[RMDB]
RNA sequence: GGGAACGACUCGAGUAGAGUCGAAAAACCGGGUCUGCCAUUCAUCGAUUUUAUUGCCAACGUGUGUCUCCCGGUGGAUAUGCAUCUACCAAUCCGUCUAGACUAACCUACAUGUUUUCAACGACUGAACCUAUGGACGUUUCGACGUCCAUAGGUUAAAAGAAACAACAACAACAAC
Reactivity to DMS in 0.01 (KOAc 150mM, MgCl2 10mM, bicine 150mM(pH8.5), 24C), signal-to-noise 2, nucleotides 027 to 126: a150c040c000g000g030g040u040c030u020g000c080c020a070u010u050c060a030u060c100g000a030u030u000u050u040a060u000u010g000c040c050a060a100c060g010u030g010u000g000u000c080u000c000c020c060g010g010u000g000g010a080u000a010u070g000c080a060u000c110u000a030c070c030a090a110u020c020c000g000u000c010u000a060g000a040c100u010a060a040c050c060u010a100c120a080u020g000u030u000u020u020c130a040a090c080g000a100c090u020g000
Reactivity to 2A3 in 0.01 (KOAc 150mM, MgCl2 10mM, bicine 150mM(pH8.5), 24C), signal-to-noise 5, nucleotides 027 to 126: a000c020c000g000g000g030u060c050u090g030c060c010a070u040u080c010a070u130c090g100a120u060u080u070u190a100u140u140g060c000c040a050a010c040g050u070g020u020g050u080c010u040c010c000c000g010g010u040g000g000a020u060a020u140g060c040a030u010c000u000a070c040c000a030a010u020c000c020g030u010c040u030a010g010a080c030u030a040a070c030c020u050a050c050a100u090g090u050u000u020u080c040a090a040c040g100a040c080u070g030